Annotation
An RNA of 177 nucleotides, treated with DMS and 2A3 and read out base by base. Conditions: 150 mM KOAc, 10 mM MgCl2 and 150 mM bicine (pH 8.5), 24 C. Source: RMDB library OK2TRN, as collected in RNAgym.
[RMDB]
RNA sequence: GGGAACGACUCGAGUAGAGUCGAAAAGCUGCUAUCUUUGAUGCACAUUUAUUAGUUUUAGAUGACCCUGAAUUAAUUCAACCAAUCCAAGAUAAGAUUAAAAAUGAAAACGCUAAUGCUGCUACAGGGUGAACAUGAAAUUCGUUUCAUGUUCACCAAAAGAAACAACAACAACAAC
Reactivity to DMS in 0.01 (KOAc 150mM, MgCl2 10mM, bicine 150mM(pH8.5), 24C), signal-to-noise 1, nucleotides 027 to 126: g000c020u000g000c030u010a150u010c050u010u010u010g010a130u000g000c020a050c070a070u010u000u030a090u020u010a060g010u000u020u000u010a120g000a150u000g010a080c080c050c020u000g010a030a050u010u010a020a070u010u000c130a060a050c070c080a090a050u000c020c040a050a070g000a060u000a050a060g000a090u010u010a010a030a080a090a070u010g010a040a060a160a100c180g020c040u000a060a040u000g000c060u000g000c100u010a070c170a090g000
Reactivity to 2A3 in 0.01 (KOAc 150mM, MgCl2 10mM, bicine 150mM(pH8.5), 24C), signal-to-noise 1, nucleotides 027 to 126: g020c040u070g000c000u040a040u110c060u060u120u130g110a050u070g020c010a040c020a090u030u060u020a090u030u030a020g060u000u000u000u270a100g030a110u060g040a040c070c000c000u070g080a090a050u080u140a020a060u130u030c010a000a060c010c010a050a040u030c000c000a000a020g020a060u090a030a050g020a040u010u300a130a020a000a000a080u090g050a160a000a010a070c030g000c010u000a040a000u110g000c010u020g030c010u070a080c020a040g080